[RMDB]
RNA sequence: GGGAACGACUCGAGUAGAGUCGAAAACAACUUCCCUUCGGGGAAGUUGAACCAUUCCCAAAUUCCACCUUGGUGAUGGCACCCGGAGAGGAGCCAUCAGCACUCCGAGAGCCUUCGGGCUCUCGAACUUGUGAUUGGAGUUCGCUCCAAUCACAAGAAAAGAAACAACAACAACAAC
Reactivity to DMS in 0.01 (KOAc 150mM, MgCl2 10mM, bicine 150mM(pH8.5), 24C), signal-to-noise 1, nucleotides 027 to 126: c020a020a000c000u000u000c000c000c010u010u020c200g020g010g010g000a010a010g000u000u000g000a040a060c250c170a220u010u000c000c000c000a050a100a140u010u010c060c100a090c300c180u000u000g010g030u000g000a020u000g010g000c010a070c070c030c000g040g000a160g000a200g000g010a060g010c010c000a010u000c000a030g000c030a110c300u000c040c040g030a030g000a020g010c000c000u000u030c180g020g000g040c010u030c000u000c000g000a030a080
Reactivity to 2A3 in 0.01 (KOAc 150mM, MgCl2 10mM, bicine 150mM(pH8.5), 24C), signal-to-noise 1, nucleotides 027 to 126: c000a000a000c010u000u000c000c000c000u010u030c260g010g010g000g000a000a000g010u000u000g000a000a020c030c000a030u020u000c030c000c000a020a120a060u130u040c060c020a070c060c070u070u030g130g020u010g130a000u000g010g000c000a050c030c050c100g250g190a110g050a260g220g000a010g000c000c000a000u000c000a000g040c010a000c040u060c030c010g000a000g000a000g000c000c020u040u070c270g100g020g000c000u000c010u000c000g010a000a000
Background
An RNA of 177 nucleotides, treated with DMS and 2A3 and read out base by base. The 2A3 profile rests on 1,474 reads. The reactions ran in a buffer of 150 mM KOAc, 10 mM MgCl2 and 150 mM bicine (pH 8.5), at 24 C.